Conditions: 150 mM KOAc, 10 mM MgCl2 and 150 mM bicine (pH 8.5), 24 C. Structure probing data (DMS) for a 177-nucleotide construct. The data come from the RNA Mapping Database (RMDB), library TTRINS.
[RMDB]
RNA sequence: GGGAACGACUCGAGUAGAGUCGAAAAGAUAUGGAAGUAACAACUUAAUUCCCGGGUCGACAUGGCUACUAUCGGAAACGAUAGAAGCCAACAGCGAUUGGGAAUUAAGUUGUUACUUCCUAAGUCACUCCAUUAAGUUCUUCGGAACUUAAUGGAGAAAAGAAACAACAACAACAAC
Reactivity to DMS in 0.01 (KOAc 150mM, MgCl2 10mM, bicine 150mM(pH8.5), 24C), signal-to-noise 1, nucleotides 027 to 126: g010a050u000a300u010g000g000a080a010g020u000a000a000c000a000a000c000u000u000a000a010u000u000c000c020c030g010g080g000u000c000g030a060c130a300u000g010g030c020u020a170c010u000a030u010c000g030g000a120a120a110c030g010a030u000a010g030a130a040g000c020c000a020a060c210a190g040c000g000a040u000u020g010g020g000a010a000u000u000a000a000g000u000u010g000u000u000a000c010u000u000c000c000u000a000a080g010u000c060a240
DMS adducts were read by reverse transcription with MarathonRT.